[RMDB]
RNA sequence: GGGAACGACUCGAGUAGAGUCGAAAAAGCUGGAAAGGUGACAUAAAAUCAUGUCAGAGAACGCGAUAUUAUGCACAUUUUCUAGUCCAAAAAGGGUUGAACUCAGUCUUCGGACUGAGUUCAACCCGUUUCGGAAAAAGUUCGCUUUUUCCGAAACAAAAGAAACAACAACAACAAC
Reactivity to DMS in 0.01 (KOAc 150mM, MgCl2 10mM, bicine 150mM(pH8.5), 24C), signal-to-noise 1, nucleotides 027 to 126: a200g000c000u000g020g000a010a000a000g000g040u000g000a200c000a000u000a000a020a170a010u010c010a030u010g020u000c050a250g010a260g010a110a020c020g010c080g000a010u000a090u000u000a010u000g010c020a040c010a050u020u000u000u010c000u000a020g000u000c000c010a020a130a060a100a110g010g000g000u000u000g000a010a000c010u000c010a020g010u000c000u000u020c220g000g000a000c010u000g010a000g000u010u010c000a000a000c000c000c000